[RMDB]
RNA sequence: GGGAACGACUCGAGUAGAGUCGAAAAUGGCGCAAUGCGAUCGACCUGUCCCACCAGAAAACGGAACAGCCAUCGGAUGAACUGGCCGAUUUCGACCAGCGUGAACAGCACGACCAGCGACAAUGCGCUCUGCGUGUUCUUUCGAGAACACGCAGAGAAAAGAAACAACAACAACAAC
Reactivity to DMS in 0.01 (KOAc 150mM, MgCl2 10mM, bicine 150mM(pH8.5), 24C), signal-to-noise 2, nucleotides 027 to 126: u000g000g000c040g030c030a070a090u000g040c060g000a060u010c010g020a090c100c020u000g020u000c010c010c000a160c060c150a180g000a070a030a060a060c090g010g030a010a060c060a070g000c200c010a060u020c050g030g000a230u010g000a100a100c060u000g000g030c000c030g090a210u000u000u000c020g000a070c040c060a040g010c060g000u000g010a070a060c090a150g000c060a150c040g000a080c030c020a090g010c040g000a060c160a050a040u000g020c050g000
Reactivity to 2A3 in 0.01 (KOAc 150mM, MgCl2 10mM, bicine 150mM(pH8.5), 24C), signal-to-noise 2, nucleotides 027 to 126: u120g040g000c050g030c070a060a150u200g010c050g090a130u020c010g060a120c020c020u000g000u000c030c030c000a040c040c000a100g080a020a100a000a020c030g030g030a070a060c010a010g050c050c020a080u060c060g180g100a110u070g020a090a090c030u010g020g000c000c030g140a160u000u080u090c040g060a120c040c000a050g000c010g050u040g010a040a050c010a020g090c040a000c060g030a020c020c010a000g030c000g050a030c080a110a080u130g000c070g000